Record summary
Conditions: 150 mM KOAc, 10 mM MgCl2 and 150 mM bicine (pH 8.5), 24 C. This 177-nucleotide RNA was probed chemically with 2A3 and DMS. Values cover nucleotides 27 to 126. In probing experiments dimethyl sulfate is read out at A N1 and C N3, which are open when not base-paired. DMS adducts were read by reverse transcription with MarathonRT.
RNA sequence: GGGAACGACUCGAGUAGAGUCGAAAAACAUUGGCCUUCGGGCCAAUGUACUGGAAAUAAAGCCGAAAGGCUACGCAUUCCUUAUAUGGCGAAAGCCUGCGAGAUUAUGUAAGUUCGCUUACAUAAAUCGAGAUAAAGUGUUCGCACUUUAUCUCGAAAAAGAAACAACAACAACAAC
Reactivity to 2A3 in 0.01 (KOAc 150mM, MgCl2 10mM, bicine 150mM(pH8.5), 24C), signal-to-noise 3, nucleotides 027 to 126: a000c010a000u000u000g010g030c000c020u030u050c250g030g000g000c010c000a000a000u000g000u000a000c040u060g050g120a040a080a130u190a040a210a020g050c010c010g040a080a040a000g000g000c010u010a000c080g040c010a060u020u050c000c000u080u080a230u030a070u260g040g000c010g030a080a010a000g020c020c010u030g060c070g040a170g010a110u040u040a010u040g000u000a000a010g000u050u120c250g010c080u000u000a000c000a000u020a020a080a020
Reactivity to DMS in 0.01 (KOAc 150mM, MgCl2 10mM, bicine 150mM(pH8.5), 24C), signal-to-noise 3, nucleotides 027 to 126: a040c000a000u000u000g000g000c000c000u000u000c210g030g010g000c000c000a000a000u000g020u020a010c110u030g000g000a050a040a070u020a090a130a020g010c000c010g000a150a060a140g010g000c000u000a040c130g030c100a150u000u000c010c020u010u000a050u010a070u010g000g010c000g000a110a060a200g000c000c010u010g000c150g000a120g010a100u000u000a000u000g010u000a000a010g010u000u000c260g030c010u000u000a000c000a000u000a010a020a090